[RMDB]
RNA sequence: GGGAACGACUCGAGUAGAGUCGAAAAAUGAUUCGUAGUGUAAGACGAUCGACUGUCAUCGCUUGCCAGCAGGACCACCAAAGGAAUACGCUUCGGUAACUACUCGAGAUCCCAAGCGAUAAAACAAUAUUUGUAUCACUUUCGAGUGAUACAAAUAAAAAGAAACAACAACAACAAC
Reactivity to 2A3 in 0.01 (KOAc 150mM, MgCl2 10mM, bicine 150mM(pH8.5), 24C), signal-to-noise 6, nucleotides 027 to 126: a010u100g010a010u050u020c020g010u060a070g040u050g060u230a080a060g090a140c020g020a020u030c040g110a120c100u100g060u140c030a050u020c040g000c040u020u030g020c000c020a010g050c020a030g040g050a030c010c010a040c020c050a120a060a070g090g010a050a040u060a090c030g000c040u010u010c020g000g030u040a140a120c000u000a000c000u010c000g000a000g000a020u000c000c000c000a000a010g080c050g130a140u150a170a130a020a020c040a120a050
Reactivity to DMS in 0.01 (KOAc 150mM, MgCl2 10mM, bicine 150mM(pH8.5), 24C), signal-to-noise 5, nucleotides 027 to 126: a060u000g000a070u000u010c020g020u010a080g020u010g000u010a090a080g010a090c020g010a060u000c040g020a070c100u000g000u010c110a060u000c070g020c050u000u000g010c020c060a100g000c070a110g000g000a090c060c120a050c050c070a040a050a120g000g020a100a080u000a060c110g000c100u000u000c040g010g000u010a080a120c010u000a010c000u010c010g000a020g010a120u000c010c000c010a080a050g000c160g010a080u000a030a060a060a080c160a050a120